[RMDB]
The data come from the RNA Mapping Database (RMDB), libraries RFM100 and RFMREP.
The record gives the reactivity of an RNA of 177 nucleotides to DMS and 2A3.

RNA sequence: GGGAACGACUCGAGUAGAGUCGAAAAUAGAAGUGGGGGCUCCUUUCAGCCUAAAACAGCUUCAAGAUUUUGGUCUUGUGGCCUAUCUAAGCUCUUCUUGAUAUUUGCUUUGGACUGAAGGGAGCUCUCUUCGAAUAGAUUUCGAUCUAUUCGAAGAAAAAGAAACAACAACAACAAC
Reactivity to DMS in 0.01 (KOAc 150mM, MgCl2 10mM, bicine 150mM(pH8.5), 24C), signal-to-noise 3, nucleotides 027 to 126: u020a100g010a110a110g020u010g030g010g010g000g000c010u000c000c000u000u000u000c000a000g000c010c000u010a010a000a020a030c040a050g000c140u000u000c010a010a010g000a020u000u000u010u000g020g010u000c000u010u020g020u020g010g000c020c120u010a040u020c140u010a090a120g010c270u000c120u000u010c010u000u000g000a030u010a050u000u010u000g010c040u000u000u000g000g000a020c000u000g000a030a000g000g000g000a010g010c000u000c000
Reactivity to 2A3 in 0.01 (KOAc 150mM, MgCl2 10mM, bicine 150mM(pH8.5), 24C), signal-to-noise 9, nucleotides 027 to 126: u210a020g120a160a020g050u190g010g050g000g010g010c000u000c000c000u000u000u010c000a000g000c000c020u050a040a030a010a020c030a000g000c000u010u010c020a010a020g000a020u090u180u230u300g130g010u030c050u060u240g110u290g060g010c010c000u050a060u060c060u070a040a050g030c030u030c040u190u050c030u070u100g040a070u060a130u210u120u090g030c030u040u030u030g010g040a170c000u000g000a000a010g010g000g000a000g000c000u000c000